[RMDB]
RNA sequence: GGGAACGACUCGAGUAGAGUCGAAAAUCACAAAGCGGAUUUAGCUCGGUUGGGAGAGGUCCAGACCGAAGAUCUGGUUGUCCUGUGUGCGAAGCACAGAAUUCGCACCAUAAACAACGGGAGAUUCAAUCCCUGAUCAGUUCGCUGAUCAGGGAUUAAAAGAAACAACAACAACAAC
Reactivity to DMS in 0.01 (KOAc 150mM, MgCl2 10mM, bicine 150mM(pH8.5), 24C), signal-to-noise 2, nucleotides 027 to 126: u030c070a070c140a070a120a140g000c080g000g000a070u000u000u010a070g020c030u000c040g000g010u010u020g000g000g010a100g010a180g010g000u000c020c030a160g000a050c060c070g000a090a020g000a130u000c000u010g000g000u000u000g010u030c040c120u000g000u010g000u000g000c030g000a010a000g030c130a060c300a230g010a050a040u000u000c000g030c020a010c000c040a010u030a200a090a010c030a000a010c060g000g020g010a030g010a120u020u020c090
Reactivity to 2A3 in 0.01 (KOAc 150mM, MgCl2 10mM, bicine 150mM(pH8.5), 24C), signal-to-noise 2, nucleotides 027 to 126: u120c000a020c070a080a120a010g150c100g040g000a040u090u140u190a130g040c050u000c050g000g030u000u050g030g020g050a220g010a070g070g130u080c020c000a050g060a030c000c010g040a000a050g010a020u000c030u070g180g000u000u000g000u000c000c030u110g050u010g000u000g090c000g000a000a000g000c060a030c070a300g100a090a010u010u000c000g000c000a000c000c000a020u070a050a080a050c050a000a000c010g030g000g000a040g030a010u010u060c000
The record gives the reactivity of an RNA of 177 nucleotides to DMS and 2A3. For DMS, 2,534 sequencing reads were counted.